[RMDB]
RNA sequence: GGGAACGACUCGAGUAGAGUCGAAAAACUAGUAUAUACAGGGGUAAGUUGACCUGUCAUCUAGACAACUUACCAGGUACUCAAAGGUAAGUUGGUUGAGUACCACAGAGUACGAACUAAGUACUCAGACAAUGGAUGCCUUCGGGUAUCUAUUGUCAAAAGAAACAACAACAACAAC
Reactivity to 2A3 in 0.01 (KOAc 150mM, MgCl2 10mM, bicine 150mM(pH8.5), 24C), signal-to-noise 7, nucleotides 027 to 126: a000c030u050a030g100u030a090u030a010u040a070c070a040g100g020g000g020u040a030a030g020u020u020g080a110c010c010u020g050u060c010a040u060c020u060a020g060a110c000a010a000c000u000u000a000c000c000a010g010g000u020a010c010u010c040a010a010a000g110g030u070a030a080g050u050u020g010g000u010u010g010a000g000u010a010c000c000a020c030a010g000a000g000u000a000c010g060a170a030c050u020a100a020g000u000a000c000u000c010a000
Reactivity to DMS in 0.01 (KOAc 150mM, MgCl2 10mM, bicine 150mM(pH8.5), 24C), signal-to-noise 9, nucleotides 027 to 126: a100c030u000a050g010u030a080u040a020u040a080c150a080g000g000g010g010u000a010a020g000u000u000g000a100c060c010u010g010u030c210a100u040c130u020a030g000a120c010a010a010c010u000u000a000c000c000a080g000g010u000a010c030u010c020a020a040a030g010g010u020a060a090g000u010u010g010g000u010u000g000a020g000u000a020c000c000a100c150a060g000a020g010u000a000c010g000a110a120c200u030a080a100g010u000a000c000u000c000a130

This 177-nucleotide RNA was probed chemically with 2A3 and DMS. For DMS, 66,434 sequencing reads were counted. As a SHAPE reagent, 2A3 marks flexible, mostly unpaired nucleotides at the ribose 2'-OH. 2A3 adducts were read by reverse transcription with SuperScript II with manganese. The RNA was probed in 150 mM KOAc, 10 mM MgCl2 and 150 mM bicine (pH 8.5) at 24 C. DMS adducts were read by reverse transcription with MarathonRT. For 2A3, 21,645 sequencing reads were counted.